[RMDB]
RNA sequence: GGGAACGACUCGAGUAGAGUCGAAAAGAAGAACAUGAAGAUGAUUGAACUGCACAAUCAGGAAUACAGGGAAGGGAAACACAGCUUCACAAUGGCCAUGAACGCCUUUGGAGACAUGGUAAGUGUGACAAUAACCCAAUUUCGAUUGGGUUAUUGUAAAAGAAACAACAACAACAAC
Reactivity to DMS in 0.01 (KOAc 150mM, MgCl2 10mM, bicine 150mM(pH8.5), 24C), signal-to-noise 9, nucleotides 027 to 126: g010a100a070g010a080a100c090a060u010g010a090a090g010a110u000g000a050u000u000g010a100a110c090u000g000c100a090c060a030a040u000c040a050g000g000a090a070u010a080c130a060g010g000g010a050a060g000g010g010a080a050a040c100a060c120a090g010c110u000u000c020a030c070a030a050u000g010g010c010c020a050u000g010a100a110c170g000c030c030u000u000u000g010g010a080g000a110c050a020u000g000g010u000a060a060g010u000g010u000g000
Reactivity to 2A3 in 0.01 (KOAc 150mM, MgCl2 10mM, bicine 150mM(pH8.5), 24C), signal-to-noise 7, nucleotides 027 to 126: g060a040a000g030a030a020c040a060u130g050a050a050g070a090u090g010a020u020u080g040a090a060c060u130g020c090a010c010a090a060u050c020a020g030g090a090a030u130a120c030a030g030g000g060a030a030g020g010g020a000a030a000c040a000c010a050g020c030u050u050c010a010c020a040a090u070g070g000c010c010a030u060g070a100a030c050g050c010c000u070u030u100g050g010a050g010a020c020a030u030g030g000u040a100a050g030u020g010u020g070